Chemical mapping of a 207-nucleotide RNA with DMS and 2A3.
RNA sequence: GGGAACGACUCGAGUAGAGUCGAAAAUCUGUGAUUCGUCACAGAAAAAAAGAUAUGGAACGUAUGACGCUAUGAAGUGUCUCGUAUCGGAAACGAUACGAGGACAUGGAGCGUUGCAUACGUUCCUAAGUCAAAAACAUGUCUUUCGAGACAUGAACAGGACAAGACUGUUCGCAGUCUUGUCCUGAAAAGAAACAACAACAACAAC
Reactivity to DMS in 0.01 (KOAc 150mM, MgCl2 10mM, bicine 150mM(pH8.5), 24C), signal-to-noise 2, nucleotides 027 to 156: u000c030u010g010u010g020a080u010u010c270g010u000c000a030c010a060g000a010a020a060a070a060a070a120g010a070u010a300u000g000g030a030a030c000g070u000a020u000g010a110c010g010c010u010a220u030g010a170a300g030u010g030u010c000u000c000g010u000a010u030c010g000g000a180a140a270c000g020a010u000a010c030g000a000g020g000a010c000a010u000g000g010a020g000c010g010u000u000g060c050a010u000a030c000g010u000u000c000c000u010a000a040g010u030c050a070a060a110a160a090c010a000u000g020u000c000u000u000u000c200g000a070g000a000c010a030u000g000a040a190
Reactivity to 2A3 in 0.01 (KOAc 150mM, MgCl2 10mM, bicine 150mM(pH8.5), 24C), signal-to-noise 5, nucleotides 027 to 156: u010c000u000g010u000g010a020u020u100c230g060u030c100a000c030a000g090a070a020a000a000a000a000a010g060a030u070a020u090g000g000a000a000c000g000u000a000u000g020a000c000g010c010u050a240u300g040a030a050g020u000g010u030c000u000c000g010u000a000u000c010g010g070a080a080a020c010g000a000u000a000c010g020a020g020g050a020c000a010u010g020g020a010g000c000g010u000u080g030c010a000u000a000c000g000u000u000c000c000u000a000a000g020u000c030a020a000a020a070a060c000a000u000g000u000c010u040u150u180c300g100a030g000a010c000a000u000g000a040a040
Record summary
For 2A3 the reverse transcriptase was SuperScript II with manganese. As a SHAPE reagent, 2A3 marks flexible, mostly unpaired nucleotides at the ribose 2'-OH. The 2A3 profile rests on 6,519 reads.